This 177-nucleotide RNA was probed chemically with 2A3 and DMS.
Source: RMDB libraries RFM100 and RFMREP, as collected in RNAgym.
RNA sequence: GGGAACGACUCGAGUAGAGUCGAAAAACUAUUUCUUCCCCAGGGCAGUAUUUCCCAAUUAUCCCUUCCUGUCAUCAUCACCUUCUUGUCCGUGCUCAUCAGCAUCUCAGACAAGUUACUAUGCUGGUCCAAGUCUAACUUUCGAGUUAGACUUGGAAAAAGAAACAACAACAACAAC
Reactivity to 2A3 in 0.01 (KOAc 150mM, MgCl2 10mM, bicine 150mM(pH8.5), 24C), signal-to-noise 4, nucleotides 027 to 126: a000c080u090a130u080u100u040c020u030u030c010c010c000c020a050g000g010g020c000a020g020u030a120u020u040u030c000c010c000a000a050u150u080a030u050c020c000c000u030u040c000c000u030g010u040c000a020u010c000a000u020c010a080c020c000u030u020c000u010u050g020u000c010c010g050u020g010c010u020c040a140u010c010a040g020c010a040u020c030u010c040a040g010a100c020a050a010g020u020u040a050c070u070a040u120g030c010u030g020g070
Reactivity to DMS in 0.01 (KOAc 150mM, MgCl2 10mM, bicine 150mM(pH8.5), 24C), signal-to-noise 3, nucleotides 027 to 126: a080c110u010a100u000u020u010c040u000u000c030c020c010c040a100g010g010g010c030a070g000u010a050u010u000u000c020c010c020a070a080u010u010a090u010c030c010c000u010u000c030c010u000g010u010c030a040u020c060a040u010c030a070c060c030u000u010c030u000u000g010u010c010c070g010u000g010c050u000c090a070u000c070a020g030c020a040u000c080u010c110a100g000a070c080a060a030g000u010u000a070c110u000a070u010g010c030u000g000g020